RNA sequence: GGGAACGACUCGAGUAGAGUCGAAAAUGUUCUGCUUGGCGGUGCGUCCGUUCCGGCGGCGUCACUGUAGAGCGACGCUGGCGAGCGGUUAAUGCGUGGGAAACGGGUCAGGCCGGCAACGGAGCAGCCCACCUCGCGCGCGCCGCCGUUGCAGAAGCUCAUUACUAGUCUUCGGACUAGUAAUGAGAAAAGAAACAACAACAACAAC
Reactivity to 2A3 in 0.01 (KOAc 150mM, MgCl2 10mM, bicine 150mM(pH8.5), 24C), signal-to-noise 2, nucleotides 027 to 156: u100g020u040u000c010u000g000c020u070u050g000g000c000g000g010u020g030c000g000u000c000c000g020u090u030c150c020g080g010c010g000g010c000g020u010c010a050c050u070g130u300a060g080a020g190c010g000a000c000g020c020u010g050g150c010g000a000g000c000g010g080u020u150a070a040u160g000c030g000u090g000g020g010a160a150a180c130g000g020g030u110c020a020g000g030c010c000g000g010c030a090a070c010g010g000a010g020c010a000g000c000c020c000a030c000c000u000c000g000c000g010c000g000c010g020c000c000g000c000c000g020u010u010g000c000a000g000a010a000g020